[RMDB]
RNA sequence: GGGAACGACUCGAGUAGAGUCGAAAAGCAGCUUUUAUUGGAUAGUACCAGGCCCUUAGCAGGAUACCCACUUAAUGAGGGUCACCACAAGAGAAUGAUAAAAUAUUCAACGGGGGACUUUUCAUAUGUUCUGGAAUUAAUUCGUUAAUUCCAGAACAAAAGAAACAACAACAACAAC
Reactivity to DMS in 0.01 (KOAc 150mM, MgCl2 10mM, bicine 150mM(pH8.5), 24C), signal-to-noise 3, nucleotides 027 to 126: g020c080a100g030c000u010u000u010u000a060u010u050g000g030a110u010a060g020u020a060c050c050a040g020g010c020c020c020u000u010a030g040c110a040g010g010a100u020a060c030c010c020a150c130u010u040a110a090u010g000a030g010g000g000u000c020a070c060c020a070c120a090a090g000a300g010a030a020u000g010a080u010a030a090a130a110u080a020u010u000c000a020a110c190g010g040g010g010g000a020c060u020u010u020u000c010a040u000a100u020
Reactivity to 2A3 in 0.01 (KOAc 150mM, MgCl2 10mM, bicine 150mM(pH8.5), 24C), signal-to-noise 7, nucleotides 027 to 126: g050c030a010g030c020u110u090u050u090a150u140u130g040g020a030u040a110g040u060a110c020c030a070g050g010c000c010c010u030u070a020g030c070a020g030g060a030u130a150c000c010c010a050c020u070u180a070a040u100g010a020g020g000g000u000c020a040c020c010a080c020a120a040g030a010g030a110a040u050g070a010u200a130a170a060a030u150a050u030u050c020a040a070c050g030g000g000g010g010a000c000u070u090u070u030c040a030u110a080u170
This 177-nucleotide RNA was probed chemically with DMS and 2A3. 2A3 is a SHAPE reagent: it acylates the 2'-hydroxyl of flexible nucleotides of all four kinds.